[RMDB]
RNA sequence: GGGAACGACUCGAGUAGAGUCGAAAAUUUAGGAAGGCAAAGUCAAGUUGUUGGGAAGAGAAUGUGUUUGGUUUAACCUUCUUUCGUAUUUUCAAAACUUAACAUGUUGUGACUCCAAAUUUUGUAGGUUUCCUAAGUCAUUCGUGACUUAGGAAACAAAAGAAACAACAACAACAAC
Reactivity to DMS in 0.01 (KOAc 150mM, MgCl2 10mM, bicine 150mM(pH8.5), 24C), signal-to-noise 2, nucleotides 027 to 126: u000u000u000a120g020g010a050a060g020g020c060a040a060a050g010u000c040a030a050g020u000u000g020u000u010g010g000g010a020a020g010a230g010a020a020u000g020u010g010u000u000u000g010g020u010u000u000a110a100c050c020u000u000c030u000u000u000c090g000u000a200u000u000u000u000c030a010a010a030a030c010u010u000a040a030c060a050u000g030u010u000g010u010g000a170c040u000c020c020a060a050a050u000u000u000u010g020u000a140g010
Reactivity to 2A3 in 0.01 (KOAc 150mM, MgCl2 10mM, bicine 150mM(pH8.5), 24C), signal-to-noise 1, nucleotides 027 to 126: u040u040u060a040g000g010a020a010g050g000c020a070a020a000g040u070c020a020a020g010u010u030g140u080u040g030g020g020a000a000g030a010g040a040a020u070g080u000g060u090u060u040g060g020u040u060u210a070a070c000c000u040u000c000u000u050u020c060g040u130a110u000u050u030u020c010a010a040a040a060c000u040u040a030a010c010a090u140g020u120u000g010u020g060a070c020u000c000c000a080a110a120u030u050u030u030g090u080a090g020

Source: RMDB library OK2TRN, as collected in RNAgym. The record gives the reactivity of an RNA of 177 nucleotides to DMS and 2A3. The RNA was probed in 150 mM KOAc, 10 mM MgCl2 and 150 mM bicine (pH 8.5) at 24 C. High 2A3 reactivity points to a flexible backbone, as in loops and unpaired stretches. For DMS the reverse transcriptase was MarathonRT.